[RMDB]
RNA sequence: GGGAACGACUCGAGUAGAGUCGAAAAAAUGCAGUUAUUAUGACACUUGAUUUAUUGAAGGACAUUAAAUUUGUUAUACCUGCUCUACAGCAUGCAUUUAUGAAACAUAAGGGCGGUGAUUCAACUGAGGCUUGAGUGUUCGCACUCAAGAAAAGAAACAACAACAACAAC
Reactivity to 2A3 in 0.01 (KOAc 150mM, MgCl2 10mM, bicine 150mM(pH8.5), 24C), signal-to-noise 9, nucleotides 027 to 129: a000a000u110g010c000a000g070u040u040a090u100u030a040u100g040a020c010a030c080u090u090g040a050u150u100u110a120u050u130g080a130a060g080g020a020c020a030u020u090a020a040a070u130u080u050g040u040u030a040u040a060c000c020u030g010c000u010c030u050a060c040a040g030c040a030u050g000c030a010u030u070u070a100u190g110a100a090a020c040a060u110a060a020g000g010g000c010g010g040u030g060a090u100u070c030a030a020c030u050g030a020g080g000
Reactivity to DMS in 0.01 (KOAc 150mM, MgCl2 10mM, bicine 150mM(pH8.5), 24C), signal-to-noise 9, nucleotides 027 to 129: a020a020u050g010c020a030g000u000u000a080u050u020a020u000g030a080c050a090c300u060u010g000a030u030u010u020a040u040u010g000a080a050g070g000a090c070a010u010u010a020a020a050u040u020u030g000u000u000a000u020a080c120c040u030g000c020u000c050u020a050c160a040g000c060a020u000g030c090a050u040u020u040a060u010g050a060a060a060c080a040u000a060a060g010g020g030c000g000g020u020g020a090u020u020c100a010a040c070u010g020a090g020g030